The data come from the RNA Mapping Database (RMDB), library TTRDES.
An RNA of 177 nucleotides, treated with DMS and 2A3 and read out base by base.
The reactions ran in a buffer of 150 mM KOAc, 10 mM MgCl2 and 150 mM bicine (pH 8.5), at 24 C.
Values cover nucleotides 27 to 126.
High 2A3 reactivity points to a flexible backbone, as in loops and unpaired stretches.
The DMS profile rests on 1,664 reads.
[RMDB]
RNA sequence: GGGAACGACUCGAGUAGAGUCGAAAAGAUAUGGAUGAUACGUGAUAUGCGUUGAUCGUGUCACUCGGAAACGAGUGCACGGGAGCAUAUCAUCAUCCUAAGUCAAAAGAAGUCGUUCGCGACUUCACAGAUUUACGACGUUCGCGUCGUAAAUCUGAAAAGAAACAACAACAACAAC
Reactivity to DMS in 0.01 (KOAc 150mM, MgCl2 10mM, bicine 150mM(pH8.5), 24C), signal-to-noise 2, nucleotides 027 to 126: g020a070u000a300u010g000g000a020u000g020a110u020a110c300g040u000g000a040u000a000u000g010c020g000u000u020g000a020u020c000g000u000g000u000c000a010c000u000c000g030g000a080a120a170c000g020a010g040u000g000c010a010c000g000g000g010a020g000c000a010u000a010u000c020a050u000c000a010u000c000c000u010a040a190g020u000c020a090a090a140a190g010a000a020g020u000c000g020u000u050c260g030c010g010a020c000u010u000c000a250
Reactivity to 2A3 in 0.01 (KOAc 150mM, MgCl2 10mM, bicine 150mM(pH8.5), 24C), signal-to-noise 2, nucleotides 027 to 126: g070a030u110a040u160g010g020a000u020g020a030u100a300c300g110u130g050a000u010a020u040g000c020g160u250u000g000a020u000c010g000u040g190u160c060a000c020u010c040g000g010a060a050a050c010g020a000g000u000g000c000a000c000g020g000g000a020g000c000a000u000a000u000c000a000u000c000a010u000c000c000u030a240a010g060u000c080a000a000a040a270g020a030a000g000u020c020g000u090u200c300g010c040g150a000c000u000u030c010a010